RNA sequence: GGGAACGACUCGAGUAGAGUCGAAAAUCGUAGUGCAAAAAUAAGGAUAAACGCGACGCAUGAAAGCAGCGGCGAAAACGCAGAAACCAAAACGUCAGGAAGAACAUGCCAACUUUAUCAGUUGGCGGAUGGUGAACCGAUUCGUCGGUUCACCAUCAAAAGAAACAACAACAACAAC
Reactivity to DMS in 0.01 (KOAc 150mM, MgCl2 10mM, bicine 150mM(pH8.5), 24C), signal-to-noise 1, nucleotides 027 to 126: u000c080g000u000a120g000u010g000c030a100a060a070a040a090u030a040a140g000g020a040u010a070a060a140c050g050c080g030a010c080g010c090a080u060g010a080a140a170g000c060a020g010c040g010g000c080g000a060a000a060a100c120g010c020a090g030a050a040a110c050c020a020a060a060a070c150g020u000c080a120g000g000a100a080g000a060a050c100a060u020g030c000c000a010a010c010u020u000u000a090u000c130a190g000u000u010g000g020c020g000
Reactivity to 2A3 in 0.01 (KOAc 150mM, MgCl2 10mM, bicine 150mM(pH8.5), 24C), signal-to-noise 1, nucleotides 027 to 126: u050c000g050u050a160g030u030g030c110a040a050a030a080a100u180a170a130g040g050a080u110a120a130a000c050g040c030g110a050c020g040c080a060u060g100a120a070a050g030c050a000g040c000g080g030c050g050a030a020a060a020c040g000c010a020g150a110a020a000c000c000a000a020a000a020c010g020u040c040a020g000g110a120a070g080a060a000c040a040u060g000c020c000a000a000c000u060u100u050a210u170c040a000g010u020u050g000g010c010g000